This 207-nucleotide RNA was probed chemically with DMS and 2A3. Reactivities are rounded to 0.1 and cut off at 0 and 3. 2A3 is a SHAPE reagent: it acylates the 2'-hydroxyl of flexible nucleotides of all four kinds. 2A3 adducts were read by reverse transcription with SuperScript II with manganese. Values cover nucleotides 27 to 156. The RNA was probed in 150 mM KOAc, 10 mM MgCl2 and 150 mM bicine (pH 8.5) at 24 C.

[RMDB]
RNA sequence: GGGAACGACUCGAGUAGAGUCGAAAAAGUGUCUGGGGAUUCCCAGUCUAGGAAAUGUUCUUUUCCUUCCAUGCAGUGGAUUUUACAGCUGUAAGGAAUUGAAGUCAUGCCAGAGGAUUCACAGAUGUGUCCUUUCCUGUUGAGGUACUGGGAGGUAAGAUUGAUAGAGUUUCGACUCUAUCAAUCUAAAAGAAACAACAACAACAAC
Reactivity to DMS in 0.01 (KOAc 150mM, MgCl2 10mM, bicine 150mM(pH8.5), 24C), signal-to-noise 3, nucleotides 027 to 156: a140g000u000g010u000c010u010g000g010g030g020a130u010u000c020c020c010a120g020u000c060u000a150g020g000a100a060a060u000g010u000u010c020u000u010u010u010c000c020u000u010c070c030a070u010g040c010a070g050u000g020g000a250u000u000u000u000a150c090a180g030c010u000g000u000a030a060g010g000a040a030u000u000g000a030a080g010u010c050a080u000g000c000c030a190g000a060g010g000a060u000u000c030a150c030a090g010a060u010g020u000g020u000c010c020u000u000u000c020c020u000g010u010u000g010a140g010g030u000a020c060u010g020g000g000a050g020g030u010a090
Reactivity to 2A3 in 0.01 (KOAc 150mM, MgCl2 10mM, bicine 150mM(pH8.5), 24C), signal-to-noise 4, nucleotides 027 to 156: a000g080u070g020u030c030u030g000g000g030g090a100u110u130c030c040c050a020g050u030c050u060a070g010g040a080a110a020u050g010u030u010c000u010u000u010u010c010c000u010u010c060c010a070u240g000c010a040g060u090g090g210a230u130u150u130u300a080c060a020g000c000u010g000u040a010a030g000g000a000a010u020u030g020a030a020g050u090c010a010u030g030c000c020a020g010a040g040g010a030u080u080c030a010c030a070g160a110u160g090u050g020u080c010c000u030u040u050c030c010u090g050u130u160g090a050g030g040u050a050c030u030g000g020g040a040g000g040u090a080